[RMDB]
RNA sequence: GGGAACGACUCGAGUAGAGUCGAAAAUGUUGACGUUGGGUUCUACGCAACGAAAACCCACGAACCCUGUCAGGUCCGGAAGGAAGCAGCAGUAAGUGGCCCCUUUCGUGUGCCGUAGAGUCGCUGGGCCGAGCUAACUGCUCAGGUAACGCUAGGGGUACAAGUAUGGGUUCGCCCAUACUUGUACAAAAGAAACAACAACAACAAC
Reactivity to 2A3 in 0.01 (KOAc 150mM, MgCl2 10mM, bicine 150mM(pH8.5), 24C), signal-to-noise 2, nucleotides 027 to 156: u080g000u010u010g060a060c060g000u020u000g000g000g000u020u000c000u010a000c000g000c010a010a000c000g000a000a000a000a000c000c000c020a000c000g020a030a110c060c000c000u000g030u110c020a020g000g000u000c000c000g070g120a120a070g000g000a010a000g000c020a010g000c010a000g010u100a110a010g000u030g000g000c000c000c040c000u010u000u000c070g010u240g070u080g130c190c060g000u000a000g000a000g000u010c000g020c050u150g010g100g000c020c010g000a000g000c040u090a100a110c070u150g000c000u000c050a090g020g020u060a250a080c030g020c030u070a050g120g070g020
Reactivity to DMS in 0.01 (KOAc 150mM, MgCl2 10mM, bicine 150mM(pH8.5), 24C), signal-to-noise 2, nucleotides 027 to 156: u010g000u000u010g000a070c260g030u000u000g010g010g020u010u030c040u000a070c040g010c030a230a040c040g000a040a030a040a110c090c000c030a080c050g010a110a080c040c010c000u030g020u000c110a110g040g010u000c000c000g020g020a190a130g010g060a070a220g020c020a040g040c020a070g000u020a090a300g010u000g010g000c000c020c040c100u000u000u000c050g030u000g020u010g040c020c010g000u010a060g010a070g030u000c050g000c020u000g020g000g080c010c070g020a120g020c080u010a100a040c050u010g010c000u000c010a050g040g000u000a020a070c050g000c050u010a070g010g000g010
The record gives the reactivity of an RNA of 207 nucleotides to 2A3 and DMS.
As a SHAPE reagent, 2A3 marks flexible, mostly unpaired nucleotides at the ribose 2'-OH.
The RNA was probed in 150 mM KOAc, 10 mM MgCl2 and 150 mM bicine (pH 8.5) at 24 C.
It was measured as part of the RMDB library ARCHII.